[RMDB]
RNA sequence: GGGAACGACUCGAGUAGAGUCGAAAAGCUCUAUCCUUCGGGAUAGAGCAAACGCUACGAUUGACGCUGAAGCCGGACCUGAGGUUCAGCAUAGUCGGGCUAAAAGUCACAUGUUCGCAUGUGACAACGCAUUAACGAACUUCGGUUCGUUAAUGCGAAAAGAAACAACAACAACAAC
Reactivity to DMS in 0.01 (KOAc 150mM, MgCl2 10mM, bicine 150mM(pH8.5), 24C), signal-to-noise 1, nucleotides 027 to 126: g000c000u000c010u010a000u000c010c000u020u000c220g020g050g040a010u000a020g000a000g010c010a020a020a060c180g000c020u000a020c000g000a010u000u000g010a090c170g020c020u020g000a040a050g010c000c010g000g000a110c160c100u000g010a180g010g000u000u000c000a000g030c000a110u000a060g010u000c000g000g000g020c040u020a020a050a130a060g000u000c000a000c000a000u010g000u000u000c190g000c010a000u010g010u020g000a010c000a040a120
Reactivity to 2A3 in 0.01 (KOAc 150mM, MgCl2 10mM, bicine 150mM(pH8.5), 24C), signal-to-noise 2, nucleotides 027 to 126: g000c000u000c000u010a010u030c000c030u000u100c240g150g010g000a010u000a010g010a000g000c000a010a000a000c030g000c010u210a170c000g020a000u000u060g110a040c050g000c030u020g030a090a050g260c000c010g050g090a240c020c080u160g110a090g050g000u010u010c000a000g050c000a000u000a000g010u000c000g000g000g000c010u020a130a030a000a020g000u010c000a000c000a000u010g040u040u070c250g000c070a000u000g010u010g000a010c000a000a010